[RMDB]
RNA sequence: GGGAACGACUCGAGUAGAGUCGAAAAUGACGGUCCGGGAUACCUCCGGCGCGGCCCGCGUCCGUAUCGGGCAGCUCUCGAGCGUGCCGAACGGGUACGGCGUCGAGGUGCUGGUGGGCGCGGAGUGGGUGCCGCUCUCGAACACGGCGGCCGGCGGCAGAUGGUAAGGAUUCGUCCUUACCAUCUGAAAAGAAACAACAACAACAAC
Reactivity to 2A3 in 0.01 (KOAc 150mM, MgCl2 10mM, bicine 150mM(pH8.5), 24C), signal-to-noise 4, nucleotides 027 to 156: u110g050a020c050g010g020u050c020c030g000g020g010a070u140a190c010c020u080c020c010g000g020c050g000c010g050g010c000c000c000g000c000g020u000c010c010g080u090a210u270c070g030g070g020c010a030g010c010u050c000u000c060g000a010g020c030g000u000g000c000c000g070a240a160c160g140g000g000u010a010c010g110g120c040g230u040c000g010a000g030g050u120g020c000u030g000g020u050g020g000g030c000g020c000g000g010a040g030u100g030g080g040u080g010c010c000g010c010u010c000u000c020g030a090a040c060a030c060g000g010c000g000g000c010c010g030g000c040g020g020
Reactivity to DMS in 0.01 (KOAc 150mM, MgCl2 10mM, bicine 150mM(pH8.5), 24C), signal-to-noise 2, nucleotides 027 to 156: u010g010a070c040g000g020u000c010c020g000g000g030a240u000a090c070c030u010c030c000g030g010c000g020c020g000g000c000c020c010g030c020g000u000c020c010g030u000a030u000c030g000g010g020c030a080g010c060u000c010u010c060g020a300g000c010g040u000g020c040c000g000a160a150c100g030g010g020u010a030c010g030g040c020g000u010c020g010a070g020g020u000g020c010u010g000g010u000g000g010g030c040g040c010g050g000a050g030u000g010g010g030u000g010c020c010g000c010u000c040u020c020g000a060a130c060a130c160g000g010c040g030g040c030c010g030g000c070g010g000
Overview
An RNA of 207 nucleotides, treated with 2A3 and DMS and read out base by base. Conditions: 150 mM KOAc, 10 mM MgCl2 and 150 mM bicine (pH 8.5), 24 C. As a SHAPE reagent, 2A3 marks flexible, mostly unpaired nucleotides at the ribose 2'-OH. Values are in units of 0.01, from 0 to 300, in steps of 10. Values cover nucleotides 27 to 156. DMS adducts were read by reverse transcription with MarathonRT. The data come from the RNA Mapping Database (RMDB), library OK3TST.